[RMDB]
RNA sequence: GGGAACGACUCGAGUAGAGUCGAAAACGCAAAGCUGCAGCGCGUCGCUCUGGAGGCCUUGCCCCGCGCACUGCUCUUUACAUGGCCCGACGUGAGGGCACUUCGCGGGCAGUGCUGCGGCCUCGUGAAACUGCCCCUAAGUUCGCUUAGGGGCAAACAACAAUAAGUAGUUCGCUACUUAUUGUUGAAAAGAAACAACAACAACAAC
Reactivity to 2A3 in 0.01 (KOAc 150mM, MgCl2 10mM, bicine 150mM(pH8.5), 24C), signal-to-noise 4, nucleotides 027 to 156: c050g000c020a050a050a010g010c010u030g020c010a010g020c000g020c020g190u260c060g010c030u040c050u060g100g040a040g010g030c020c040u070u140g010c000c000c000c000g000c000g000c000a050c040u070g020c010u030c020u080u180u130a110c080a140u200g060g000c020c020c030g090a170c070g040u050g030a190g000g000g020c030a030c010u040u030c030g010c070g070g000g000c010a010g010u020g010c020u020g000c000g000g000c000c010u000c010g000u030g020a110a050a030c050u040g000c000c000c000c000u000a010a010g010u030u120c200g060c130u000u000a000g000g000g000g000c000a000a000a000
Reactivity to DMS in 0.01 (KOAc 150mM, MgCl2 10mM, bicine 150mM(pH8.5), 24C), signal-to-noise 2, nucleotides 027 to 156: c060g000c040a020a050a010g020c030u010g050c010a030g020c070g040c060g010u000c050g030c070u010c080u030g000g010a130g020g010c020c060u000u000g000c010c060c010c020g000c040g010c000a100c020u000g010c010u000c040u020u020u010a120c080a130u000g000g010c010c000c020g010a200c090g030u010g040a170g010g010g020c010a030c020u000u000c040g030c210g000g010g020c020a090g010u010g020c020u000g020c040g010g000c010c010u000c060g000u000g000a110a080a090c110u010g030c000c000c030c010u000a010a040g010u000u000c300g010c000u000u000a020g000g000g030g050c010a000a000a020